[RMDB]
Structure probing data (2A3 and DMS) for a 177-nucleotide construct. The reactions ran in a buffer of 150 mM KOAc, 10 mM MgCl2 and 150 mM bicine (pH 8.5), at 24 C. For 2A3, 10,237 sequencing reads were counted. For DMS, 12,310 sequencing reads were counted. 2A3 adducts were read by reverse transcription with SuperScript II with manganese. Source: RMDB library OK2TST, as collected in RNAgym.
RNA sequence: GGGAACGACUCGAGUAGAGUCGAAAAUCAGCUGAUCUGAAUUCUAUGGCAAUGGUGGUUCGAUCAAUGGCACUGGCAGAAUUUAGCCCAUUGGAUUCUGCGUUAUCACACCUGCAGACGACCGCCGAUAGCAUUUCUAUUUCGAUAGAAAUGCUAUAAAAGAAACAACAACAACAAC
Reactivity to 2A3 in 0.01 (KOAc 150mM, MgCl2 10mM, bicine 150mM(pH8.5), 24C), signal-to-noise 6, nucleotides 027 to 126: u060c010a010g050c060u100g040a080u090c020u050g040a060a080u150u010c050u090a170u190g090g000c060a090a120u130g010g000u010g020g050u130u110c020g040a300u030c000a030a050u050g020g000c060a030c190u070g070g000c010a010g020a030a010u030u040u040a070g030c000c020c020a030u030u100g020g010a010u000u000c000u010g020c020g040u090u080a150u220c040a020c010a020c060c010u040g010c030a080g020a030c010g000a010c000c030g030c010c000g010
Reactivity to DMS in 0.01 (KOAc 150mM, MgCl2 10mM, bicine 150mM(pH8.5), 24C), signal-to-noise 9, nucleotides 027 to 126: u000c040a070g020c130u000g010a080u010c030u010g000a070a100u010u010c060u000a090u010g010g010c110a100a090u010g010g030u000g000g020u010u000c030g010a110u000c020a050a110u000g010g010c090a100c180u000g010g020c020a020g000a030a030u000u000u000a080g010c090c030c030a150u010u000g000g000a030u010u000c000u000g010c010g010u000u000a100u010c160a090c130a110c030c020u000g010c160a180g010a070c060g000a050c040c030g030c020c030g010